[RMDB]
RNA sequence: GGGAACGACUCGAGUAGAGUCGAAAAAAGGCUAAGGAAUGCCAGAAAUCCCCAGAAACUGAGAGAAUCAUAGAUGAUUUCCCUCUCAGAGUCUCUGAUAAGGAAACAACUCUGUUGACAGCUUGAUUUUGGACUUUUGGCCUCCUGAACUGUGAGAUGUAUGCCUUAUUUUCGAAUAAGGCAUACAAAAAGAAACAACAACAACAAC
Reactivity to 2A3 in 0.01 (KOAc 150mM, MgCl2 10mM, bicine 150mM(pH8.5), 24C), signal-to-noise 3, nucleotides 027 to 156: a000a000g040g000c040u050a020a020g060g040a150a050u130g020c000c010a000g020a000a070a000u020c010c020c000c000a000g020a030a050a000c010u010g010a000g000a000g020a040a000u010c020a040u110a210g200a190u100g030a030u060u040u140c030c020c020u010c020u000c000a010g010a140g070u030c000u000c010u120g030a100u100a180a030g050g050a060a040a040c020a000a010c060u070c100u180g110u130u020g080a070c070a040g080c050u080u090g020a080u090u080u060u060g060g000a010c020u060u060u030u140g000g000c000c000u040c010c010u020g040a060a070c020u080g030u060g130a040g030a180
Reactivity to DMS in 0.01 (KOAc 150mM, MgCl2 10mM, bicine 150mM(pH8.5), 24C), signal-to-noise 2, nucleotides 027 to 156: a130a090g010g000c030u010a180a060g040g030a090a100u000g020c000c010a070g010a030a060a090u000c030c010c150c070a210g000a090a070a070c040u010g030a050g010a080g000a140a090u000c030a090u000a170g020a150u000g020a110u000u000u000c000c010c020u000c030u010c020a060g000a060g000u000c100u000c020u000g010a110u010a120a070g000g000a080a080a070c020a060a080c030u000c000u000g030u000u000g000a080c040a090g020c020u000u010g000a150u000u000u000u000g040g000a050c020u020u000u000u010g000g030c000c090u000c000c000u000g010a080a050c050u010g000u000g020a080g010a180